[RMDB]
RNA sequence: GGGAACGACUCGAGUAGAGUCGAAAAAAGCUACUCUUUCUGAGUUUUCACACUUAGCUACCUUUGCUGAGUUGGAAGCUGCGCAGAAAGCCUAUCAGGAAGCUAUGGACUCUGGUGACACCUCACCGUUGUAAUCAAGGUUCGCCUUGAUUACAACAAAAGAAACAACAACAACAAC
Reactivity to 2A3 in 0.01 (KOAc 150mM, MgCl2 10mM, bicine 150mM(pH8.5), 24C), signal-to-noise 2, nucleotides 027 to 126: a000a000g020c010u030a020c010u000c000u040u010u030c020u020g010a010g010u030u030u010u000c030a060c000a000c070u030u010a000g020c000u080a120c030c040u200u240u120g000c000u020g000a000g000u010u010g000g000a000a000g000c040u060g050c150g000c040a010g050a040a000a000g000c020c000u130a150u070c030a020g030g060a060a000g000c010u050a080u070g060g030a040c010u000c050u100g000g030u020g010a010c020a050c060c010u020c020a020c000c060
Reactivity to DMS in 0.01 (KOAc 150mM, MgCl2 10mM, bicine 150mM(pH8.5), 24C), signal-to-noise 4, nucleotides 027 to 126: a080a040g010c010u010a080c070u010c010u000u010u010c000u000g000a070g020u010u010u000u000c000a020c220a030c000u000u010a010g000c010u000a110c300c170u010u020u010g000c010u000g000a020g000u000u000g000g000a010a010g000c020u000g020c200g020c030a020g000a010a010a030g010c170c070u000a090u010c150a060g020g000a120a050g010c040u000a070u010g010g000a100c090u010c040u000g020g010u010g010a050c190a090c140c080u000c040a040c050c050